Overview
An RNA of 177 nucleotides, treated with DMS and 2A3 and read out base by base. The reactions ran in a buffer of 150 mM KOAc, 10 mM MgCl2 and 150 mM bicine (pH 8.5), at 24 C. For DMS the reverse transcriptase was MarathonRT. The DMS profile rests on 6,294 reads.
RNA sequence: GGGAACGACUCGAGUAGAGUCGAAAAUGCGAGCUAGAGUACGUACCAUGAGCUGCGGUACGCGUACUCACACGACGUACCAUGUGAUCACUGUACGGUACGAUCCCAUGAGUACGAUCGACGGAUCGCUUAAGUUCAUCUUCGGAUGAACUUAAGCAAAAGAAACAACAACAACAAC
Reactivity to DMS in 0.01 (KOAc 150mM, MgCl2 10mM, bicine 150mM(pH8.5), 24C), signal-to-noise 5, nucleotides 027 to 126: u010g010c030g010a050g010c100u000a120g010a080g020u000a030c000g010u000a040c010c010a130u010g010a110g040c120u010g020c090g010g010u000a020c040g010c080g020u000a030c010u000c010a180c200a190c030g010a040c000g000u000a010c000c000a040u010g000u000g000a030u000c020a100c050u000g010u020a070c200g000g010u010a100c180g000a030u000c000c050c000a020u000g000a140g010u000a010c000g000a060u000c010g010a150c210g000g000a110u010c100
Reactivity to 2A3 in 0.01 (KOAc 150mM, MgCl2 10mM, bicine 150mM(pH8.5), 24C), signal-to-noise 7, nucleotides 027 to 126: u160g020c040g030a030g040c110u180a080g010a000g020u020a000c000g010u000a020c020c030a100u160g140a050g130c210u230g060c070g070g000u020a010c030g000c050g050u010a000c000u000c020a030c000a000c010g040a000c000g000u000a010c000c020a010u010g010u010g010a020u030c020a010c070u120g150u300a100c180g020g010u060a080c090g010a020u000c020c000c000a020u010g000a030g030u010a000c020g090a290u020c000g070a080c060g060g020a070u080c090